[RMDB]
RNA sequence: GGGAACGACUCGAGUAGAGUCGAAAAUGACUAAGAUCCUUGGAAAUACAGCCGUCAUACACCACUUUAAGUGCUGUCAUUUCACUGUGGUUAUUUCCCACUUUGACAUGUUCUCUGGCCUGUGGGGGAAGUACGUAUGGUUCGCCAUACGUACUUCAAAAGAAACAACAACAACAAC
Reactivity to DMS in 0.01 (KOAc 150mM, MgCl2 10mM, bicine 150mM(pH8.5), 24C), signal-to-noise 4, nucleotides 027 to 126: u000g010a040c040u000a130a110g010a090u010c060c050u000u000g020g000a050a070a040u000a070c060a060g000c040c060g000u000c120a070u010a120c120a100c090c040a040c060u000u000u000a100a070g030u000g020c090u000g010u000c120a010u000u000u000c020a080c040u000g000u000g010g010u000u010a090u000u010u000c060c000c020a060c130u000u000u000g010a050c060a070u000g010u000u000c020u000c030u010g010g010c040c050u000g010u000g000g020g010g000
Reactivity to 2A3 in 0.01 (KOAc 150mM, MgCl2 10mM, bicine 150mM(pH8.5), 24C), signal-to-noise 4, nucleotides 027 to 126: u030g000a000c040u040a080a000g030a140u090c030c020u060u110g090g060a030a080a020u080a040c020a010g020c020c000g050u100c040a030u070a120c060a050c050c030a060c050u100u210u160a230a040g080u090g080c020u040g020u040c020a010u010u050u030c030a040c050u050g030u070g050g040u060u070a080u110u090u040c010c010c000a010c000u060u030u050g050a030c020a020u070g040u090u030c050u000c020u020g050g000c020c000u030g000u060g010g000g020g030
An RNA of 177 nucleotides, treated with DMS and 2A3 and read out base by base. For 2A3, 6,660 sequencing reads were counted. It was measured as part of the RMDB library OK2TRN. The RNA was probed in 150 mM KOAc, 10 mM MgCl2 and 150 mM bicine (pH 8.5) at 24 C. Reactivities are rounded to 0.1 and cut off at 0 and 3.